[RMDB]
The record gives the reactivity of an RNA of 177 nucleotides to 2A3. Source: RMDB library RFM100, as collected in RNAgym. 2A3 is a SHAPE reagent: it acylates the 2'-hydroxyl of flexible nucleotides of all four kinds.

RNA sequence: GGGAACGACUCGAGUAGAGUCGAAAAACGAGCCUAUUACGAUAGGCUCGAAUAUAGCAGGUCCUCAAUAAGUAUUUGUUGAAAAAAUAAAUGAAGCAACAAAUCUUAUUUGAGCACCUGUUAUGAACCGAGACCUGAGUUUCGACUCAGGUCUCGGAAAAGAAACAACAACAACAAC
Reactivity to 2A3 in 0.01 (KOAc 150mM, MgCl2 10mM, bicine 150mM(pH8.5), 24C), signal-to-noise 1, nucleotides 027 to 126: a000c000g000a000g000c000c000u010a030u140u250a090c290g090a000u000a000g000g000c000u000c000g020a000a000u090a000u000a000g000c030a000g010g000u070c000c000u000c000a010a000u000a000a000g130u120a000u000u000u000g030u010u000g020a000a000a000a060a060a060u110a180a000a080u150g110a090a000g130c010a000a000c030a020a010a010u000c000u000u090a070u080u050u300g000a000g030c030a000c000c000u010g010u020u000a000u000g020a030a000